An RNA of 177 nucleotides, treated with DMS and 2A3 and read out base by base. For DMS the reverse transcriptase was MarathonRT. Conditions: 150 mM KOAc, 10 mM MgCl2 and 150 mM bicine (pH 8.5), 24 C. The data come from the RNA Mapping Database (RMDB), library RFM100.
[RMDB]
RNA sequence: GGGAACGACUCGAGUAGAGUCGAAAAAUCUGGAAUGAUGCCAAAAGAAAGGGUGCCUAUCGUCCACCAGACCGAUAACAGGGCGUGAAAACGAACUUUAUCAAGCAUCGGACGACACGUUGAGUGAAGGACGGGAUUAGUUCGCUAAUCCCGUCCUAAAAGAAACAACAACAACAAC
Reactivity to DMS in 0.01 (KOAc 150mM, MgCl2 10mM, bicine 150mM(pH8.5), 24C), signal-to-noise 1, nucleotides 027 to 126: a030u090c070u040g000g030a160a150u000g050a020u000g040c010c070a070a070a240a020g070a080a070a060g050g000g010u000g000c000c090u000a080u000c000g000u000c000c030a070c160c120a050g000a020c100c140g010a010u000a000a020c140a060g030g000g040c000g040u000g000a110a030a090a050c010g000a010a000c000u000u000u000a000u000c000a090a190g000c090a020u090c030g020g000a000c010g000a090c300a000c090g000u000u000g000a260g000u000g000a120
Reactivity to 2A3 in 0.01 (KOAc 150mM, MgCl2 10mM, bicine 150mM(pH8.5), 24C), signal-to-noise 1, nucleotides 027 to 126: a000u080c030u000g100g030a070a060u170g000a000u040g000c000c000a090a110a090a220g140a010a110a100g100g060g000u000g080c000c000u140a030u030c060g000u000c000c000a040c000c030a130g000a200c000c140g070a000u100a000a080c040a130g050g000g000c000g000u000g090a200a000a000a000c000g000a010a060c040u010u000u010a000u000c010a080a000g040c000a190u050c000g000g080a010c000g030a000c000a010c030g040u070u030g020a150g120u000g120a000